[RMDB]
RNA sequence: GGGAACGACUCGAGUAGAGUCGAAAAUGCGGUUUUGAGAAAAGAUUCGCAAAAUGCCCAACUAGUACCAGACCAUGGCGCGUAACAUUCAAAGUAAAGAGGAAGUGAUCGAAAUGCUAAAAAUUCAAUUUAGUAAUUUAUUCGUAAAUUACUAAAUAAAAGAAACAACAACAACAAC
Reactivity to DMS in 0.01 (KOAc 150mM, MgCl2 10mM, bicine 150mM(pH8.5), 24C), signal-to-noise 2, nucleotides 027 to 126: u000g020c000g010g010u000u000u010u000g000a190g000a160a120a070a050g000a040u000u000c010g010c000a020a040a050a080u010g010c020c000c000a100a140c190u000a110g020u000a060c050c040a110g010a070c060c060a030u000g000g030c110g020c070g010u000a050a080c120a060u000u000c130a020a050a110g000u000a020a080a070g000a120g000g000a030a030g010u010g020a050u010c060g000a060a080a050u000g010c060u000a020a080a080a080a120u010u000c040a070
Reactivity to 2A3 in 0.01 (KOAc 150mM, MgCl2 10mM, bicine 150mM(pH8.5), 24C), signal-to-noise 1, nucleotides 027 to 126: u000g000c000g000g030u060u020u050u080g130a150g120a080a060a020a020g020a010u170u170c000g010c000a020a140a140a050u120g050c030c000c030a030a020c030u000a010g050u030a040c030c060a000g020a000c010c000a050u010g020g000c000g000c040g030u050a000a080c000a040u000u080c050a070a070a110g030u060a010a200a030g110a020g000g050a090a000g050u050g070a030u140c020g030a050a000a050u070g000c010u100a100a070a000a070a200u240u200c000a040

The record gives the reactivity of an RNA of 177 nucleotides to DMS and 2A3. Conditions: 150 mM KOAc, 10 mM MgCl2 and 150 mM bicine (pH 8.5), 24 C. DMS adducts were read by reverse transcription with MarathonRT. The 2A3 profile rests on 819 reads. High DMS reactivity at an A or C suggests that its Watson-Crick edge is free.